[RMDB]
RNA sequence: GGGAACGACUCGAGUAGAGUCGAAAAGAUAUGGAUAUAGGGAGUCCAAUGGUCGGAAACGACCAUGGGACUUUGAUCUAUCAUCCUAAGUCAAACUGGUAGCGGUGGUUCGCCACCGCUACCAGAAGUGGUUAACUACGUUCGCGUAGUUAACCACAAAAGAAACAACAACAACAAC
Reactivity to DMS in 0.01 (KOAc 150mM, MgCl2 10mM, bicine 150mM(pH8.5), 24C), signal-to-noise 1, nucleotides 027 to 126: g000a050u000a290u010g000g010a010u000a070u000a020g000g000g010a000g020u000c000c000a070a000u000g000g010u000c000g050g020a090a070a140c000g010a010c000c000a000u000g010g020g000a010c020u000u000u010g000a070u020c000u000a010u000c190a010u000c000c010u010a050a110g000u000c050a100a100a220c020u000g000g000u000a010g000c000g000g020u000g000g020u010u040c300g000c000c020a030c010c000g000c000u000a000c000c000a010g000a030a050